[RMDB]
RNA sequence: GGGAACGACUCGAGUAGAGUCGAAAAGAUAUGGAACGAUGGUCGAGUCGGCAGCUGGAGGUAGUACCUCGGAAACGAGGUCCUACCGAUGAAAGCUGAAGGCCCAGACAGCCAUCGUUCCUAAGUCCUAUGAAGACAUCUUCGGAUGUCUUCAUAGAAAAGAAACAACAACAACAAC
Reactivity to DMS in 0.01 (KOAc 150mM, MgCl2 10mM, bicine 150mM(pH8.5), 24C), signal-to-noise 4, nucleotides 027 to 126: g030a030u000a040u000g000g000a020a000c000g020a010u000g010g000u000c020g000a020g060u010c000g000g020c000a010g010c010u010g010g000a020g010g010u000a000g000u000a010c000c000u000c000g000g000a020a020a040c000g010a020g000g000u000c030c000u010a010c000c000g000a040u010g000a160a170a030g010c000u010g000a030a010g010g000c020c300c130a100g000a010c300a130g000c000c000a020u000c010g010u000u000c000c000u010a010a050g000u000c010
Overview
Chemical mapping of a 177-nucleotide RNA with DMS.